[RMDB]
Chemical mapping of a 177-nucleotide RNA with 2A3 and DMS.
RNA sequence: GGGAACGACUCGAGUAGAGUCGAAAACGCGGUUCACCGCUCGAAGCGGAAUAAUGCGGCGUGGACAUUGGUGACGAUACGGGUUGCCCUGGUGCAUGCCGUGACGCCCGUGACCCAAUGCCACCGCGAUAGCCCCACCUUUCGAGGUGGGGCUAUCAAAAGAAACAACAACAACAAC
Reactivity to 2A3 in 0.01 (KOAc 150mM, MgCl2 10mM, bicine 150mM(pH8.5), 24C), signal-to-noise 1, nucleotides 027 to 126: c020g020c070g100g070u170u090c050a040c110c010g030c000u010c090g220a150a030g000c010g000g100a070a110u130a090a030u210g110c000g050g040c030g030u040g000g000a070c030a040u030u100g010g040u080g040a110c080g000a020u050a300c020g040g110g020u080u300g110c020c000c030u140g000g030u070g090c070a080u300g020c000c010g000u010g000a010c020g020c010c000c010g010u040g080a060c020c010c010a000a000u020g000c030c010a000c000c030g040c010
Reactivity to DMS in 0.01 (KOAc 150mM, MgCl2 10mM, bicine 150mM(pH8.5), 24C), signal-to-noise 1, nucleotides 027 to 126: c010g030c040g000g030u000u000c300a160c000c000g000c050u000c170g010a130a160g070c000g000g010a090a030u000a060a070u020g000c000g010g000c080g000u030g000g030a100c000a000u000u000g000g020u060g040a210c230g020a120u030a000c010g000g070g010u000u000g040c000c000c040u040g000g000u000g010c220a080u000g060c020c000g000u010g000a040c050g000c040c000c000g010u000g010a130c150c000c000a000a030u000g000c010c000a030c020c020g010c060

For DMS, 705 sequencing reads were counted. For 2A3 the reverse transcriptase was SuperScript II with manganese.